[RMDB]
RNA sequence: GGGAACGACUCGAGUAGAGUCGAAAACCUACUCACUACGUCCUCGUCGUACAGAACGGUAACAUGUUUUCCGAACAUCCGCGCUUGGGUAUACGAGUAUACACCUUACCCAACCCUCGCCAACGGGAGUGCAUCCACGAGUUCGCUCGUGGAUGAAGUAUCAUGAGGGCUUCGGCCCUCAUGAUACAAAAGAAACAACAACAACAAC
Reactivity to 2A3 in 0.01 (KOAc 150mM, MgCl2 10mM, bicine 150mM(pH8.5), 24C), signal-to-noise 2, nucleotides 027 to 156: c010c000u070a080c020u040c020a050c070u110a020c040g100u090c010c000u000c030g050u080c030g020u060a070c050a080g050a170a040c040g070g040u030a050a030c090a130u150g040u040u030u070u040c030c000g040a020a060c060a110u110c020c030g040c000g000c150u030u020g030g020g000u020a050u010a080c090g000a030g070u010a010u070a070c090a130c000c010u090u080a040c000c010c030a030a040c020c000c000u040c000g040c040c020a090a030c010g000g060g000a060g030u060g020c000a010u000c010c000a000c000g010a000g000u080u050c150g020c140u000c010g000u000g000g010a000u000g000a000a000